Structure probing data (DMS and 2A3) for a 177-nucleotide construct. Values are in units of 0.01, from 0 to 300, in steps of 10. For DMS, 1,839 sequencing reads were counted. 2A3 is a SHAPE reagent: it acylates the 2'-hydroxyl of flexible nucleotides of all four kinds. The data come from the RNA Mapping Database (RMDB), library RFMREP. Values cover nucleotides 27 to 126.

[RMDB]
RNA sequence: GGGAACGACUCGAGUAGAGUCGAAAAAUCUAUUCGGAUAAACCGAAUAACUCGUCGUAGUCAAGCAUUGCUUGAGGUGGCACAGGGAAGAGCUGUGGUGGCUCAGUUCGUAAAGCUACACCUGGAGGUUUAGAUAAUGCUUCGGCAUUAUCUAAACAAAAGAAACAACAACAACAAC
Reactivity to DMS in 0.01 (KOAc 150mM, MgCl2 10mM, bicine 150mM(pH8.5), 24C), signal-to-noise 2, nucleotides 027 to 126: a080u010c100u000a010u000u000c000g010g010a300u040a120a150a210c000c000g020a060a010u000a010a070c080u000c050g010u000c120g020u000a090g010u000c010a040a060g020c030a140u000u020g020c030u030u010g000a000g020g000u000g010g010c030a080c050a070g010g000g020a090a090g010a050g020c030u000g010u010g040g020u020g000g020c010u000c050a060g010u000u000c080g030u000a070a130a120g010c020u000a040c070a080c050c010u000g020g000a100g000
Reactivity to 2A3 in 0.01 (KOAc 150mM, MgCl2 10mM, bicine 150mM(pH8.5), 24C), signal-to-noise 2, nucleotides 027 to 126: a010u000c030u020a020u000u000c000g000g010a050u130a180a140a200c010c010g000a010a030u020a040a040c030u010c060g090u040c030g020u080a030g050u030c030a040a000g000c080a220u020u300g020c020u020u040g020a030g090g140u030g030g010c000a010c070a070g050g040g040a040a110g030a080g020c030u030g010u130g070g220u050g000g000c010u030c040a010g000u040u020c040g040u070a000a050a060g010c010u050a000c000a010c000c030u010g060g050a070g120